[RMDB]
RNA sequence: GGGAACGACUCGAGUAGAGUCGAAAACUACGGAUUCGUCCGUAGAUGGCCCGAUGAUUGGAAACGGAGUGAGCUGAGGUGUGAUGACCGACUUCCCGCUGAGGAAACCCACCAGUUCGCUGGUGGGAGAGAUAGACGCAUUCGUGCGUCUAUCUCUAAAAGAAACAACAACAACAAC
Reactivity to DMS in 0.01 (KOAc 150mM, MgCl2 10mM, bicine 150mM(pH8.5), 24C), signal-to-noise 2, nucleotides 027 to 126: c000u000a000c010g020g010a040u000u010c240g000u000c010c020g050u000a000g000a060u000g000g000c010c010c030g000a060u010g000a120u020u000g030g010a050a070a120c120g010g000a080g000u010g030a050g000c040u000g000a130g010g000u000g030u000g010a130u000g020a060c050c020g000a080c080u000u000c020c020c030g000c160u000g020a090g010g000a100a120a300c010c000c000a020c010c000a010g020u000u010c210g040c010u000g010g000u000g000g000g000